RNA sequence: GGGAACGACUCGAGUAGAGUCGAAAAAUCAGUACGGAUCAUACAAUGGUCUUCGUCCAUUCCGUUUCAAUUUGAGUUCCGGAUACGUGACGAUGGACAACGGGUGUACUAUUAAUGGAAGCGGUACUGUGAAUGGAGGACUCACAUCAAGUGGUAAGCCGCUGCGAAUUUUCGAAUUCGCAGCGGCAAAAGAAACAACAACAACAAC
Reactivity to 2A3 in 0.01 (KOAc 150mM, MgCl2 10mM, bicine 150mM(pH8.5), 24C), signal-to-noise 1, nucleotides 027 to 156: a030u070c000a010g010u020a070c060g050g030a020u020c070a000u070a160c160a230a280u180g030g000u050c080u070u000c010g000u020c020c000a000u160u000c040c160g070u010u010u020c100a090a080u000u140u300g070a070g050u030u010c050c010g010g000a030u090a160c020g120u150g070a040c020g000a000u150g020g070a000c010a010a000c000g020g000g020u040g010u020a010c000u020a020u090u170a120a040u070g020g000a030a000g110c020g040g000u000a080c030u040g030u100g070a080a160u070g000g000a020g010g020a030c000u020c010a000c000a040u200c070a050a050g030u030g000g000u060a050a040